[RMDB]
RNA sequence: GGGAACGACUCGAGUAGAGUCGAAAAAUGGUAGUUAGUCUACUCGCUAUCCUAGUUACUUUGGAGUUAUCUAAAGUGUGUGUAAACGGGCGAAAGUCUGUAAAAUACUGGGGACAUAGGGUCAACAAGAACUAGUAGACCUUCGGGUCUACUAGAAACCAAUUGAUAGUUUCGACUAUCAAUUGGUAAAAGAAACAACAACAACAAC
Reactivity to DMS in 0.01 (KOAc 150mM, MgCl2 10mM, bicine 150mM(pH8.5), 24C), signal-to-noise 3, nucleotides 027 to 156: a090u010g040g010u000a040g030u000u010a090g030u010c010u000a040c000u000c080g000c070u000a110u010c020c030u000a110g040u010u000a040c010u000u000u010g020g010a070g020u000u010a110u010c010u000a020a010a050g020u010g030u020g050u010g020u010a060a150a050c000g000g010g000c020g000a180a110a200g020u000c020u000g030u000a030a050a050a070u010a030c020u000g010g020g000g010a060c080a120u000a070g010g030g000u000c040a050a070c050a030a080g000a120a110c000u000a030g010u000a010g010a030c010c000u000u000c300g040g030g030u000c000u000a010c000u000a010g000a030a040
Reactivity to 2A3 in 0.01 (KOAc 150mM, MgCl2 10mM, bicine 150mM(pH8.5), 24C), signal-to-noise 4, nucleotides 027 to 156: a000u070g030g000u020a030g020u090u080a060g040u040c020u030a030c000u030c030g040c030u040a070u120c000c000u020a030g020u050u040a010c010u000u010u020g040g020a070g050u250u110a150u120c010u020a020a020a010g010u030g000u020g000u000g020u070a060a120a030c020g010g010g010c010g030a070a010a010g000u010c000u030g040u060a020a080a020a030u100a050c020u030g010g000g000g000a010c010a040u100a050g070g000g010u070c020a030a030c010a090a080g080a060a040c010u000a000g000u000a000g000a000c000c000u020u010c120g050g000g000u000c000u000a000c000u000a000g000a000a000